[RMDB]
RNA sequence: GGGAACGACUCGAGUAGAGUCGAAAAAUAGCUCGUACUCCCCGAAAUGCAUUUAGGUGCAGCGUUGUGGUUGAGUUUUAUAGAGGUAGAGCUACUGAUAGGAUGCGGGGGCUUCACCGCCUACCAAAUAAGUCAACACAUUCGUGUGUUGACUUAUAAAAGAAACAACAACAACAAC
Reactivity to DMS in 0.01 (KOAc 150mM, MgCl2 10mM, bicine 150mM(pH8.5), 24C), signal-to-noise 4, nucleotides 027 to 126: a040u030a080g000c020u020c030g020u030a090c100u000c010c000c000c050g000a080a090a090u000g010c010a010u000u020u030a090g010g030u010g010c020a030g010c170g000u000u000g010u000g000g030u000u000g010a140g000u000u000u020u020a100u040a080g010a190g010g020u000a050g000a080g000c010u000a040c120u010g000a070u020a060g010g000a120u030g000c040g000g000g020g000g000c080u010u010c090a060c080c150g000c020c010u000a060c080c040a070a090
Reactivity to 2A3 in 0.01 (KOAc 150mM, MgCl2 10mM, bicine 150mM(pH8.5), 24C), signal-to-noise 3, nucleotides 027 to 126: a000u070a010g010c000u000c030g030u100a030c000u020c000c000c000c000g030a070a060a030u030g000c020a000u060u060u160a160g080g000u040g000c050a050g020c090g070u020u070g030u060g050g020u000u060g070a080g020u020u030u010u040a210u090a010g130a020g020g040u050a010g040a020g060c010u040a060c020u050g020a050u150a120g060g030a070u190g050c050g010g000g010g000g000c000u030u050c020a030c040c000g000c010c000u020a060c010c010a020a020
Overview
Source: RMDB libraries RFM100 and RFMREP, as collected in RNAgym. An RNA of 177 nucleotides, treated with DMS and 2A3 and read out base by base. Values cover nucleotides 27 to 126. 2A3 adducts were read by reverse transcription with SuperScript II with manganese. For DMS the reverse transcriptase was MarathonRT. DMS (dimethyl sulfate) methylates the pairing face of unpaired adenines and cytosines.